Structure probing data (DMS and 2A3) for a 177-nucleotide construct. 2A3 adducts were read by reverse transcription with SuperScript II with manganese. The RNA was probed in 150 mM KOAc, 10 mM MgCl2 and 150 mM bicine (pH 8.5) at 24 C. Values cover nucleotides 27 to 126.
[RMDB]
RNA sequence: GGGAACGACUCGAGUAGAGUCGAAAAGAAAGAAAGAAAGAUCAACCUGUAGCACUCAAACUUUGGGGGCACUUUCUGUUCUCUAAGCUUGGAAGUGCUGCCUUCGUUUGGGGGUUACCGAUUGAAAAAUAUGACCCAUGUUCGCAUGGGUCAUAUUAAAAGAAACAACAACAACAAC
Reactivity to DMS in 0.01 (KOAc 150mM, MgCl2 10mM, bicine 150mM(pH8.5), 24C), signal-to-noise 4, nucleotides 027 to 126: g020a100a090a080g010a120a090a060g000a080a100a110g000a150u000c000a010a020c020c010u000g030u000a000g000c010a010c010u000c000a010a010a000c000u010u010u000g000g000g000g010g010c010a000c010u000u010u010c010u010g000u010u020c190u030c210u040a100a080g020c090u010u010g000g000a020a000g010u000g010c000u000g000c000c000u000u000c060g010u000u000u000g010g000g000g010g020u010u000a000c000c070g000a040u000u000g000a010a080a110
Reactivity to 2A3 in 0.01 (KOAc 150mM, MgCl2 10mM, bicine 150mM(pH8.5), 24C), signal-to-noise 6, nucleotides 027 to 126: g100a000a050a000g140a040a050a000g130a050a060a010g110a100u030c010a010a030c010c000u000g000u000a000g000c000a000c010u000c000a000a000a000c020u030u030u030g000g000g020g010g010c000a000c000u010u030u000c010u010g160u230u030c150u010c080u210a190a110g040c060u150u230g020g000a000a010g010u000g020c000u080g180c000c000u000u030c010g000u010u010u000g010g000g000g000g000u010u010a010c010c000g020a020u000u040g040a110a120a010